[RMDB]
This 177-nucleotide RNA was probed chemically with DMS and 2A3.
It was measured as part of the RMDB library OK2TST.
2A3 adducts were read by reverse transcription with SuperScript II with manganese.
For DMS the reverse transcriptase was MarathonRT.

RNA sequence: GGGAACGACUCGAGUAGAGUCGAAAAUGCGCCGGGCCAUGCACCAGCCCCUGACCGGCAAGCUCCAGCACCUUUUCUUCAAAGGCGCGGAUCAGAUGCAUCUGGGAAAGCAUGGUGCCACCAAGCAGCACCAUAGUAGUUUCGACUACUAUGGUGCAAAAGAAACAACAACAACAAC
Reactivity to DMS in 0.01 (KOAc 150mM, MgCl2 10mM, bicine 150mM(pH8.5), 24C), signal-to-noise 3, nucleotides 027 to 126: u000g000c090g020c100c080g020g010g010c000c030a040u000g000c020a090c100c100a150g000c110c020c040c050u000g010a080c130c110g020g000c030a120a140g000c200u010c020c010a150g030c010a030c000c000u000u000u000u000c230u010u000c170a030a040a030g020g010c020g020c030g000g010a020u000c030a090g020a200u010g010c040a070u000c010u000g010g030g000a100a090a120g010c040a030u000g010g030u000g000c020c050a080c130c080a040a080g040c070a160
Reactivity to 2A3 in 0.01 (KOAc 150mM, MgCl2 10mM, bicine 150mM(pH8.5), 24C), signal-to-noise 2, nucleotides 027 to 126: u070g010c060g030c030c030g010g010g040c010c010a030u010g020c010a030c090c030a040g050c030c000c000c000u040g040a040c050c050g100g000c020a020a000g010c030u020c020c020a030g000c020a020c020c000u030u050u140u130c060u220u180c080a020a020a020g000g000c000g010c010g000g020a020u020c020a040g140a110u080g020c000a040u040c020u070g000g030g000a110a080a000g000c020a020u020g020g040u050g210c000c010a050c010c010a050a000g030c010a030

Values cover nucleotides 27 to 126. For DMS, 1,937 sequencing reads were counted.